[RMDB]
RNA sequence: GGGAACGACUCGAGUAGAGUCGAAAAGGUUAUAAACACAUGUAAUGGGAGAUUACUUUUGUUAACAUUCUGCUGGUUUGUAGUAGAAAUGAAACAAGAUCAGCCCCCAGUUAACAUAUGAAGUCAACGUACACCUCACAUUCGUGUGAGGUGUACGAAAAGAAACAACAACAACAAC
Reactivity to 2A3 in 0.01 (KOAc 150mM, MgCl2 10mM, bicine 150mM(pH8.5), 24C), signal-to-noise 1, nucleotides 027 to 126: g040g010u150u120a110u120a280a160a000c040a000c010a050u060g050u130a100a020u020g000g050g000a110g000a050u050u090a070c000u040u070u030u000g000u000u000a090a030c010a020u000u040c060u060g000c000u050g250g140u300u140u260g180u080a050g000u000a050g050a030a040a030u070g000a030a000a030c000a000a020g020a050u090c040a000g110c010c000c030c030c010a010g090u080u020a050a000c000a010u080a040u200g100a120a060g130u120c020a040a080
Reactivity to DMS in 0.01 (KOAc 150mM, MgCl2 10mM, bicine 150mM(pH8.5), 24C), signal-to-noise 2, nucleotides 027 to 126: g020g020u000u010a100u020a090a150a170c050a080c100a040u000g040u000a060a090u000g000g020g000a060g010a100u000u010a060c260u000u000u000u000g000u000u010a030a130c010a050u000u000c060u000g020c010u000g000g020u000u020u010g030u020a030g030u000a030g010a070a010a010u000g000a150a020a010c010a030a030g000a000u000c150a140g000c030c000c000c000c010a050g020u000u000a050a030c020a020u000a030u000g000a120a110g000u020c130a050a110
This 177-nucleotide RNA was probed chemically with 2A3 and DMS.
As a SHAPE reagent, 2A3 marks flexible, mostly unpaired nucleotides at the ribose 2'-OH.
The RNA was probed in 150 mM KOAc, 10 mM MgCl2 and 150 mM bicine (pH 8.5) at 24 C.
For 2A3, 733 sequencing reads were counted.
The DMS profile rests on 1,303 reads.